[RMDB]
Chemical mapping of a 177-nucleotide RNA with 2A3 and DMS. Conditions: 150 mM KOAc, 10 mM MgCl2 and 150 mM bicine (pH 8.5), 24 C. 2A3 adducts were read by reverse transcription with SuperScript II with manganese.

RNA sequence: GGGAACGACUCGAGUAGAGUCGAAAAAGCUGACGCUUUGGGGCCGCCUCUGCUGGGUUUUCGCCCAGUUGAACAGUCGAAGACCGUGGAAGCCGUAAUGGCACGAAGCGAUCGAAUGGCUGGAUAAUAUAUAGUCUUUUUUCGAAAAGACUAUAUAAAAAGAAACAACAACAACAAC
Reactivity to 2A3 in 0.01 (KOAc 150mM, MgCl2 10mM, bicine 150mM(pH8.5), 24C), signal-to-noise 5, nucleotides 027 to 126: a010g030c040u070g030a020c080g020c030u040u030u060g060g000g010g030c010c020g010c000c010u000c010u020g000c010u010g010g000g030u060u130u070u080c060g010c010c000c000a000g000u010u030g010a060a010c000a010g000u000c000g020a070a000g010a000c000c010g010u030g010g030a050a020g000c000c000g080u240a100a250u300g000g000c050a030c120g010a000a010g010c000g020a020u000c000g030a060a060u110g000g000c000u000g000g010a020u050a260a020
Reactivity to DMS in 0.01 (KOAc 150mM, MgCl2 10mM, bicine 150mM(pH8.5), 24C), signal-to-noise 9, nucleotides 027 to 126: a050g010c010u010g020a120c170g010c020u000u000u010g000g010g010g030c060c030g010c060c030u000c020u010g000c010u000g010g000g000u080u010u020u030c180g000c000c000c000a030g000u010u010g000a090a120c030a010g000u000c000g010a150a250g000a010c030c000g020u000g010g010a260a090g000c000c010g020u030a120a080u060g010g020c010a030c130g010a300a190g000c010g000a040u000c010g000a100a180u020g000g000c000u000g010g000a090u020a080a120
As a SHAPE reagent, 2A3 marks flexible, mostly unpaired nucleotides at the ribose 2'-OH.